This 207-nucleotide RNA was probed chemically with DMS and 2A3. The 2A3 profile rests on 6,891 reads.
RNA sequence: GGGAACGACUCGAGUAGAGUCGAAAACGUGCACGUUCGCGUGCACGAAAAACCGUAGGAAUCCUCCCGCACCUCGUUGAUCGACGGUUCGAAAGAGCCGUCGGGAGAGGUAUGGGAGGGAUUCCUAAACGGAAAAACACUGGGUUCGCCCAGUGAAACCAAUAAUCAUGUUCGCAUGAUUAUUGGUAAAAGAAACAACAACAACAAC
Reactivity to DMS in 0.01 (KOAc 150mM, MgCl2 10mM, bicine 150mM(pH8.5), 24C), signal-to-noise 2, nucleotides 027 to 156: c020g080u000g020c000a000c020g010u000u000c260g020c010g030u000g000c000a000c000g010a020a030a090a080a090c010c010g010u000a040g000g000a050a020u000c000c000u010c000c010c000g020c010a020c000c010u010c010g010u000u020g010a080u000c000g000a020c010g020g010u010u020c010g000a180a140a280g010a010g030c000c000g030u010c000g000g010g000a040g030a010g020g020u000a000u010g010g020g000a040g000g000g000a000u000u000c000c000u000a000a030a080c000g000g000a040a080a110a120a140c030a040c020u010g010g000g000u000u000c300g020c020c010c000a010g000u000g010a050a170
Reactivity to 2A3 in 0.01 (KOAc 150mM, MgCl2 10mM, bicine 150mM(pH8.5), 24C), signal-to-noise 3, nucleotides 027 to 156: c010g000u000g000c010a000c010g030u060u070c280g000c020g140u000g000c000a000c000g010a000a000a000a000a000c010c000g010u020a010g000g000a000a010u010c000c020u000c010c000c000g000c010a010c000c010u010c010g170u190u010g010a010u010c000g000a000c000g000g010u000u010c000g030a130a130a090g010a010g000c000c010g000u000c000g000g000g000a010g000a000g010g000u000a010u020g010g000g030a000g000g000g010a000u000u010c000c000u010a020a050a000c000g020g030a090a030a010a050a000c000a000c000u010g000g000g060u080u080c250g110c030c000c000a000g000u000g010a050a010
Conditions: 150 mM KOAc, 10 mM MgCl2 and 150 mM bicine (pH 8.5), 24 C. For DMS the reverse transcriptase was MarathonRT. 2A3 adducts were read by reverse transcription with SuperScript II with manganese.